[RMDB]
RNA sequence: GGGAACGACUCGAGUAGAGUCGAAAAGAUAUGGAGCACGGGAGCUCCCAGUCGGAAACGACUGUGAGAGCAUCGAUCGUGACUCCUAAGUCAAACACCUGGUGCUAGUUCGCUAGCACCAGGUGAACUAACUUGAUGACUUCGGUCAUCAAGUUAGAAAAGAAACAACAACAACAAC
Reactivity to DMS in 0.01 (KOAc 150mM, MgCl2 10mM, bicine 150mM(pH8.5), 24C), signal-to-noise 2, nucleotides 027 to 126: g000a050u000a300u000g020g000a000g020c010a020c000g020g030g010a030g010c000u000c000c020c000a000g000u010c000g000g000a060a080a170c000g010a020c000u000g010u010g010a160g010a010g000c000a160u010c130g010a070u000c000g010u000g000a170c010u000c000c000u000a010a060g010u000c030a090a110a300c010a010c000c010u010g000g010u000g000c000u000a000g010u000u020c190g020c030u000a000g020c000a000c000c000a000g000g000u000g010a020a120
Reactivity to 2A3 in 0.01 (KOAc 150mM, MgCl2 10mM, bicine 150mM(pH8.5), 24C), signal-to-noise 2, nucleotides 027 to 126: g010a020u090a030u180g000g000a010g000c000a000c000g030g020g020a040g000c000u000c000c000c020a000g010u000c000g030g020a080a020a020c020g000a000c020u020g060u100g080a300g000a010g060c030a140u300c040g050a060u060c000g030u030g180a270c000u000c000c010u030a060a010g050u020c020a060a120a080c010a000c010c000u010g040g010u000g010c000u000a000g030u060u060c300g020c210u000a000g000c000a010c000c010a000g000g000u000g000a000a000